[RMDB]
RNA sequence: GGGAACGACUCGAGUAGAGUCGAAAAAUCGACGCAUCGGGCGCGGCGAGCGGAUGCCCGUCCGGCAGCGCCGCGAUCAGCCGCUCUUCGACGAGCACCUCGCGCACGAGCCGAUCGUCGUCGAAGAGCACUGAGUCCGAUUCGUCGGACUCAGUGCAAAAGAAACAACAACAACAAC
Reactivity to 2A3 in 0.01 (KOAc 150mM, MgCl2 10mM, bicine 150mM(pH8.5), 24C), signal-to-noise 4, nucleotides 027 to 126: a000u050c010g000a010c010g010c030a020u010c010g040g030g060c040g010c020g030g010c010g010a020g040c090g080g010a090u070g050c020c010c000g010u020c040c000g030g040c020a030g030c010g020c050c040g030c020g060a150u120c060a010g020c030c060g000c010u000c000u060u080c020g030a040c020g000a000g020c020a040c010c030u030c010g020c010g030c030a080c160g050a060g180c000c000g010a030u040c040g100u040c000g000u000c010g020a030a030g020a020
Reactivity to DMS in 0.01 (KOAc 150mM, MgCl2 10mM, bicine 150mM(pH8.5), 24C), signal-to-noise 6, nucleotides 027 to 126: a080u000c030g010a020c030g010c070a040u000c010g010g000g010c010g020c020g000g000c010g010a160g020c080g010g010a070u000g000c040c020c020g000u000c010c040g010g030c190a070g010c030g030c040c040g020c020g000a110u010c130a100g010c080c100g010c010u000c010u000u000c080g010a030c020g000a040g010c080a100c070c050u000c000g020c120g010c090a110c160g000a100g010c030c020g000a030u000c110g010u010c000g010u000c010g000a020a040g000a090
Chemical mapping of a 177-nucleotide RNA with 2A3 and DMS. The DMS profile rests on 9,052 reads. Reactivities are given for positions 27 through 126. The RNA was probed in 150 mM KOAc, 10 mM MgCl2 and 150 mM bicine (pH 8.5) at 24 C.